Record summary: The record gives the reactivity of an RNA of 177 nucleotides to DMS and 2A3. The reactions ran in a buffer of 150 mM KOAc, 10 mM MgCl2 and 150 mM bicine (pH 8.5), at 24 C. For DMS the reverse transcriptase was MarathonRT. Values cover nucleotides 27 to 126. 2A3 adducts were read by reverse transcription with SuperScript II with manganese.

RNA sequence: GGGAACGACUCGAGUAGAGUCGAAAACCGGGGAUCACGGUCGCGCUGCCACCGCCGAGAAAGCGGGGUUCGCCCGCCGAAGGGCCGAGCAGGGCGACGGUCGUCUCCGGCGCCAACGGCAGUGCGAGAGUGGUCCAUGAUUCGUCAUGGACCACUCAAAAGAAACAACAACAACAAC
Reactivity to DMS in 0.01 (KOAc 150mM, MgCl2 10mM, bicine 150mM(pH8.5), 24C), signal-to-noise 4, nucleotides 027 to 126: c010c000g010g000g000g000a040u010c300a030c040g010g000u000c010g010c000g000c010u000g000c000c020a150c130c080g010c010c000g030a130g010a090a160a080g010c000g000g000g000g000u010u010c180g010c010c000c010g020c000c030g000a190a250g010g000g020c040c050g010a250g000c030a080g000g000g010c000g010a010c000g010g020u000c160g010u000c030u020c010c000g000g010c040g010c030c060a080a110c110g000g010c030a050g010u000g020c040g010a110
Reactivity to 2A3 in 0.01 (KOAc 150mM, MgCl2 10mM, bicine 150mM(pH8.5), 24C), signal-to-noise 3, nucleotides 027 to 126: c000c000g000g030g010g010a050u080c050a030c080g100g070u000c010g010c010g020c020u010g010c010c010a080c050c030g000c000c000g050a070g090a130a060a000g020c000g000g030g030g000u260u130c100g130c020c000c010g000c010c010g030a070a040g090g030g000c060c050g030a030g020c020a080g000g110g000c010g000a000c020g000g040u010c010g030u010c010u000c010c010g000g000c010g010c000c010a090a050c070g040g010c040a060g020u050g070c030g070a080